[RMDB]
RNA sequence: GGGAACGACUCGAGUAGAGUCGAAAAGGCAGUCAAAAGUACGAGGGCAAUUUUAAACUGAUGAUUGUCAACAACAAACCCCUACACAUUUCGGAUUACGAUAAAGGUGUGCGAAAUAGGUUUGCCGUCAUCUAUACGGACCAUCUGUUCGAGGAAACGUACCUGUUGUCUUCGGACAACAGGUACGAAAAGAAACAACAACAACAAC
Reactivity to 2A3 in 0.01 (KOAc 150mM, MgCl2 10mM, bicine 150mM(pH8.5), 24C), signal-to-noise 1, nucleotides 027 to 156: g020g000c030a000g000u020c000a000a040a060a000g030u020a080c050g050a040g060g030g000c040a040a010u150u150u160u300a250a290a040c040u000g010a020u010g000a000u000u020g070u000c010a010a000c010a020a010c000a000a120a000c010c000c010c020u080a040c060a020c000a090u000u000u150c020g030g030a080u120u260a080c040g020a020u130a170a240a040g120g000u000g000u020g020c040g000a040a040a040u040a070g000g000u000u010u160g010c010c000g030u000c020a100u000c020u100a090u040a100c000g080g010a040c030c030a070u000c000u020g020u030u050c060g050a020g020g010a080a070a000
About this RNA
This 207-nucleotide RNA was probed chemically with 2A3. It was measured as part of the RMDB library OK3TST. The reactions ran in a buffer of 150 mM KOAc, 10 mM MgCl2 and 150 mM bicine (pH 8.5), at 24 C. Values cover nucleotides 27 to 156.